[RMDB]
RNA sequence: GGGAACGACUCGAGUAGAGUCGAAAAAUAUAAUGUGGUCAUAGGGGUUUGUAAUUUCCUUUUCAAUUCGCUUCUGCUCAUCUCACCAUACAUUGUCAGAGUUAUAAUAAUAGCCUUCCUCAAAUUAGUCCAAUUCAAUAUUAUCCUCUCCAUUUGACAGGGAAACACUAUUCGUAGUGUUUCCCUGAAAAGAAACAACAACAACAAC
Reactivity to 2A3 in 0.01 (KOAc 150mM, MgCl2 10mM, bicine 150mM(pH8.5), 24C), signal-to-noise 2, nucleotides 027 to 156: a000u060a000u030a050a080u090g000u030g050g010u030c000a020u080a030g030g010g000g020u010u130u040g070u100a110a060u020u060u110c010c000u070u030u030u080c050a040a070u030u000c050g020c000u040u040c010u060g010c000u010c000a040u010c030u020c030a040c060c000a020u070a120c030a060u020u130g080u060c030a010g020a020g110u040u080a210u030a160a140u100a080a070u030a020g000c020c000u020u020c000c000u030c000a060a110a060u080u030a040g030u000c000c010a000a010u040u090c060a060a060u040a030u200u080a030u030c010c020u030c020u010c030c060a090u050u070u130g050a060
Reactivity to DMS in 0.01 (KOAc 150mM, MgCl2 10mM, bicine 150mM(pH8.5), 24C), signal-to-noise 1, nucleotides 027 to 156: a050u030a060u000a070a090u000g000u000g000g000u000c020a070u000a140g010g030g010g000u010u000u020g020u000a050a080u000u010u000c040c000u000u000u000u020c030a050a190u000u000c030g030c040u000u010c040u000g070c050u000c030a090u020c000u010c050a080c110c030a070u010a000c050a190u000u000g010u000c010a080g010a200g020u010u010a050u010a050a020u000a100a110u000a130g000c030c020u000u000c000c000u000c070a030a030a090u020u000a040g020u000c020c050a050a120u000u000c040a030a070u000a110u020u000a030u000c050c030u010c030u010c030c060a130u010u000u000g030a240
Record summary:
An RNA of 207 nucleotides, treated with 2A3 and DMS and read out base by base. Values cover nucleotides 27 to 156. DMS adducts were read by reverse transcription with MarathonRT. For 2A3, 1,031 sequencing reads were counted. For 2A3 the reverse transcriptase was SuperScript II with manganese. For DMS, 2,110 sequencing reads were counted.